[RMDB]
RNA sequence: GGGAACGACUCGAGUAGAGUCGAAAAUAAUUACAGCCACCACAGAGAAAUUUAAAGGUCUGUACUAGUUUACUAGGUGUAGCAGAUGCUCCAUGAUGAGAAAGCGCUGUGGUGGGGAAUAAUUGCAGUGCUAGGCAAAGUUCGCUUUGCCUAGCACAAAAGAAACAACAACAACAAC
Reactivity to 2A3 in 0.01 (KOAc 150mM, MgCl2 10mM, bicine 150mM(pH8.5), 24C), signal-to-noise 1, nucleotides 027 to 126: u130a000a000u020u010a010c000a010g020c000c000a000c000c000a000c000a000g000a000g100a050a270a090u180u270u220a110a080a000g050g000u000c000u000g000u050a040c000u000a040g170u170u260u160a140c000u020a010g030g000u160g000u140a030g000c000a000g010a000u050g020c000u000c000c050a240u300g030a070u110g000a020g000a000a100a050g270c000g000c010u000g000u000g000g000u000g000g000g000g000a000a090u010a020a010u020u000g100c000a010